[RMDB]
RNA sequence: GGGAACGACUCGAGUAGAGUCGAAAAUUUUGACUUUAUAACUCCAUAGAGAAGAAGAGAUGAAAAAACUAUUUGUAGCCUUAGGACUUAUCAUGGGUAGCUUGCAUAUAAGCUAUGCAGAACCAGAAUAAUAUCGGGUGUUCGCACCCGAUAUUAUAAAAGAAACAACAACAACAAC
Reactivity to DMS in 0.01 (KOAc 150mM, MgCl2 10mM, bicine 150mM(pH8.5), 24C), signal-to-noise 1, nucleotides 027 to 126: u010u020u010u000g040a300c070u000u000u000a040u020a160a150c060u000c040c060a150u000a080g000a140g010a110a140g030a040a060g000a070g000a050u010g010a020a030a040a080a080a050c070u020a090u000u000u000g000u000a070g020c050c020u000u020a070g020g010a100c090u000u010a040u040c100a090u000g010g010g020u000a010g020c050u010u000g000c110a110u000a080u000a050a040g020c230u010a020u000g000c010a020g000a060a080c050c040a120g020a090